This 177-nucleotide RNA was probed chemically with 2A3 and DMS.
For DMS the reverse transcriptase was MarathonRT.
Conditions: 150 mM KOAc, 10 mM MgCl2 and 150 mM bicine (pH 8.5), 24 C.
Reactivities are given for positions 27 through 126.
The 2A3 profile rests on 1,291 reads.
[RMDB]
RNA sequence: GGGAACGACUCGAGUAGAGUCGAAAAGAAAAAGGAGGACAUGUCCGCCUGAUUGUGUCCGACCCUGUAGAUACUUCGCUCUGGAAAUUGUGCCGGACAACCCACGCGCGCAGCGAGCCGAAAAAAACUAAUGGACAUGGUUCGCCAUGUCCAUUAGAAAAGAAACAACAACAACAAC
Reactivity to 2A3 in 0.01 (KOAc 150mM, MgCl2 10mM, bicine 150mM(pH8.5), 24C), signal-to-noise 2, nucleotides 027 to 126: g040a040a160a000a000a000g000g010a020g000g010a000c010a080u060g030u080c020c030g090c030c180u070g010a060u090u200g000u010g030u010c000c000g040a160c050c000c000u040g100u100a070g060a190u120a130c020u010u040c030g030c020u020c020u020g080g060a020a100a090u110u030g030u040g040c000c000g030g020a080c020a010a080c050c000c020a030c050g040c010g000c000g000c030a020g030c020g030a000g020c040c050g000a130a110a000a000a000a000a030
Reactivity to DMS in 0.01 (KOAc 150mM, MgCl2 10mM, bicine 150mM(pH8.5), 24C), signal-to-noise 3, nucleotides 027 to 126: g010a070a060a110a170a050g000g020a230g000g010a040c030a040u000g000u010c000c230g000c130c100u000g010a060u000u020g010u010g010u000c000c030g010a130c060c020c050u000g000u000a050g010a150u010a040c130u000u000c040g010c040u000c020u000g010g000a060a050a130u010u000g010u000g000c000c030g000g020a080c070a080a070c040c040c020a080c070g000c110g020c060g040c050a070g010c040g010a070g000c040c010g010a000a000a030a040a080a070a120